[RMDB]
RNA sequence: GGGAACGACUCGAGUAGAGUCGAAAACUUCCAUAGCACUGGGGUCCCGGGCCCCCUCCCAGGAAUGGGAAUGGGGGGAGAUCGACCGGGUCCCGCAGAACCCGAUGGAGUUCCCAACCUUCCCCUUAGCGCCGGCACUUCGGUGCCGGCAAAAGAAACAACAACAACAAC
Reactivity to 2A3 in 0.01 (KOAc 150mM, MgCl2 10mM, bicine 150mM(pH8.5), 24C), signal-to-noise 1, nucleotides 027 to 129: c010u210u050c000c000a030u000a040g070c060a030c090u000g000g000g060g000u000c000c000c000g000g060g010c010c000c000c000c000u120c030c000c000a020g000g130a070a050u070g010g000g000a050a040u110g050g000g000g010g060g000a040g030a130u130c120g110a060c000c000g000g000g000u000c000c000c000g020c000a000g000a050a060c010c030c080g040a010u030g000g000a020g020u010u030c000c000c000a000a040c000c000u000u100c000c010c000c000u040u170a050g040c040
Chemical mapping of a 170-nucleotide RNA with 2A3.
The RNA was probed in 150 mM KOAc, 10 mM MgCl2 and 150 mM bicine (pH 8.5) at 24 C.
Source: RMDB library 15KLIB, as collected in RNAgym.
For 2A3, 2,037 sequencing reads were counted.